RNA sequence: GGGAACGACUCGAGUAGAGUCGAAAAUACUGAUGUAUUUGUGUUUACCUACAUUUUCUAUGGCACCUGUUGAAUUUUAUGAAGACCGCAUCUUGGACUUUAAAGUUCUUGAUAAUGGUAUCAUUAGCGAUCGGCCACUUCGGUGGCCGAAAAAGAAACAACAACAACAAC
Reactivity to 2A3 in 0.01 (KOAc 150mM, MgCl2 10mM, bicine 150mM(pH8.5), 24C), signal-to-noise 2, nucleotides 027 to 129: u030a000c000u000g140a060u300g000u060a020u000u030u000g000u000g080u010u100u050a200c040c000u060a090c000a090u190u160u080u010c010u040a000u000g000g020c000a000c000c000u000g000u010u030g070a100a040u000u040u080u110a090u060g040a040a000g030a000c000c000g000c060a030u010c040u080u030g000g000a000c010u080u100u180a000a200a000g000u010u000c000u000u000g000a040u030a110a090u030g050g050u080a070u000c000a000u050u030a000g040c000g000a000
Reactivity to DMS in 0.01 (KOAc 150mM, MgCl2 10mM, bicine 150mM(pH8.5), 24C), signal-to-noise 1, nucleotides 027 to 129: u000a010c000u050g000a090u050g040u010a040u000u070u030g040u040g000u040u000u050a160c040c000u040a060c270a220u000u000u000u050c030u160a110u000g060g000c070a080c060c050u010g050u020u020g030a040a100u000u000u000u000a000u000g020a090a150g000a080c000c000g000c290a040u000c010u000u010g030g000a000c030u000u040u030a090a040a040g000u000u010c000u010u000g010a000u000a060a030u030g000g070u020a020u030c040a000u000u040a040g050c150g040a170